[RMDB]
RNA sequence: GGGAACGACUCGAGUAGAGUCGAAAAACAAUGCUAGCACUGGUGAACGUCUGACGAACGAGUUCUUUACGACCGGUGAUAACAAUUGGUAUUACAUUGGCGCAAACGGUAAGAGCGUGACGGGUGACUUGGUUAACUGGUUCGCCAGUUAACCAAGAAAAGAAACAACAACAACAAC
Reactivity to 2A3 in 0.01 (KOAc 150mM, MgCl2 10mM, bicine 150mM(pH8.5), 24C), signal-to-noise 2, nucleotides 027 to 126: a000c080a040a090u090g040c010u050a000g040c000a010c040u020g070g020u040g080a140a020c030g070u040c040u030g070a040c070g030a060a040c030g020a030g100u100u040c000u070u130u120a070c060g030a050c030c000g000g020u040g010a030u060a060a000c020a080a140u070u080g040g030u040a040u000u040a040c060a080u000u060g030g000c000g000c090a140a070a090c020g000g080u100a090a000g030a000g030c050g000u010g050a010c030g040g050g000u070g040a030
Reactivity to DMS in 0.01 (KOAc 150mM, MgCl2 10mM, bicine 150mM(pH8.5), 24C), signal-to-noise 3, nucleotides 027 to 126: a050c040a050a030u000g010c030u000a030g010c030a010c020u000g000g000u000g020a060a100c040g010u010c040u020g010a080c110g010a110a080c120g020a170g020u000u010c050u000u000u020a090c100g000a070c030c020g020g000u000g010a060u010a020a020c030a070a090u000u000g010g010u000a110u000u000a080c090a110u000u000g000g000c050g010c080a060a070a090c040g010g010u010a050a090g010a060g000c050g030u000g000a080c070g010g010g030u000g010a190